[RMDB]
RNA sequence: GGGAACGACUCGAGUAGAGUCGAAAACACGGAUUUCGAUCCGUGCAUCAGGGGUCGGUCCGAGGGGGAGAGUGUACUGAAGCCUCCACGGUACCACUCUUUGAUCCUACCCACCGGACCGACGGAGGCACCCAUACACCCACCUUUCGAGGUGGAAGAUCAAUUGGCUGUUCGCAGCCAAUUGAUCAAAAGAAACAACAACAACAAC
Reactivity to 2A3 in 0.01 (KOAc 150mM, MgCl2 10mM, bicine 150mM(pH8.5), 24C), signal-to-noise 1, nucleotides 027 to 156: c000a000c000g000g010a000u030u140u300c220g120a050u100c020c010g000u000g000c000a100u100c000a070g200g040g070g020u000c010g040g030u030c000c000g030a060g010g050g040g010g000a040g010a010g040u000g000u000a010c000u020g020a100a000g030c000c000u000c000c010a030c000g000g000u000a020c110c000a030c040u000c000u010u180u160g050a090u100c010c000u090a160c000c000c000a040c020c000g010g000a010c010c010g000a000c000g010g000a000g010g030c000a010c000c000c000a040u110a090c100a060c000c000c000a020c010c000u090u150u080c170g100a030g000g000u010g000g000a010a020